[RMDB]
RNA sequence: GGGAACGACUCGAGUAGAGUCGAAAAAUGGUUUUCGGAGUUGCCCAGUGGAGAAUUCUCCAAUACCACUUUCCACACUCCCUCCAAUGCCUGACAGCACUUUCCUGCUUUGAAUUAAUCCUGAGAAGUUCUCCACAUAGUUCGCUAUGUGGAGAACAAAAGAAACAACAACAACAAC
Reactivity to DMS in 0.01 (KOAc 150mM, MgCl2 10mM, bicine 150mM(pH8.5), 24C), signal-to-noise 1, nucleotides 027 to 126: a120u000g000g010u000u000u000u000c100g030g010a130g010u000u010g010c110c030c150a160g010u010g000g020a060g000a070a170u000u030c010u010c010c010a140a060u010a000c030c010a070c130u000u010u000c010c030a070c150a110c100u020c060c010c010u000c020c040a080a070u000g000c030c030u000g010a070c070a060g030c080a030c070u000u010u000c010c020u000g010c070u010u010u010g010a050a040u000u010a110a150u010c040c000u010g010a040g020a090a230
The record gives the reactivity of an RNA of 177 nucleotides to DMS. The reactions ran in a buffer of 150 mM KOAc, 10 mM MgCl2 and 150 mM bicine (pH 8.5), at 24 C. For DMS, 718 sequencing reads were counted. DMS adducts were read by reverse transcription with MarathonRT. Reactivities are given for positions 27 through 126. In probing experiments dimethyl sulfate is read out at A N1 and C N3, which are open when not base-paired. The data come from the RNA Mapping Database (RMDB), library OK2TST.